[RMDB]
RNA sequence: GGGAACGACUCGAGUAGAGUCGAAAAUGUACUGGUUGGGCGCCAACGGCGUAUUCGGUUCCGCGGUGCUGCCCGGGAUUUUGAUCAUCGUCUUCAUCGAGACCGGUCUGCUGUUUCCGCUGCUGCCGAAAGCUUAACAUUUCGAUGUUAAGCUUUCAAAAGAAACAACAACAACAAC
Reactivity to DMS in 0.01 (KOAc 150mM, MgCl2 10mM, bicine 150mM(pH8.5), 24C), signal-to-noise 7, nucleotides 027 to 126: u030g020u030a080c040u000g010g030u000u010g010g010g020c040g000c040c070a090a230c180g010g030c050g020u010a040u020u030c050g020g000u010u010c040c030g010c150g000g010u010g000c050u010g000c050c010c020g010g010g000a090u000u010u010u010g010a080u010c130a100u010c080g010u010c040u010u010c060a070u010c060g010a120g020a090c050c030g000g010u000c020u000g000c030u010g000u000u010u000c060c040g000c020u020g010c030u000g010c100c090
Reactivity to 2A3 in 0.01 (KOAc 150mM, MgCl2 10mM, bicine 150mM(pH8.5), 24C), signal-to-noise 9, nucleotides 027 to 126: u150g020u060a050c030u040g070g000u050u070g080g030g000c020g010c000c030a120a060c090g040g000c030g020u060a110u060u130c030g030g010u090u030c010c020g020c060g030g000u060g010c050u070g020c000c010c000g020g010g010a050u060u080u070u170g080a080u060c060a050u060c050g060u000c030u090u050c040a120u050c040g020a010g040a090c020c010g020g020u020c030u050g010c010u030g030u050u080u020c000c010g000c030u050g000c010u030g020c010c020
An RNA of 177 nucleotides, treated with DMS and 2A3 and read out base by base. It was measured as part of the RMDB library OK1LIB. The DMS profile rests on 20,603 reads. Values cover nucleotides 27 to 126. Conditions: 150 mM KOAc, 10 mM MgCl2 and 150 mM bicine (pH 8.5), 24 C.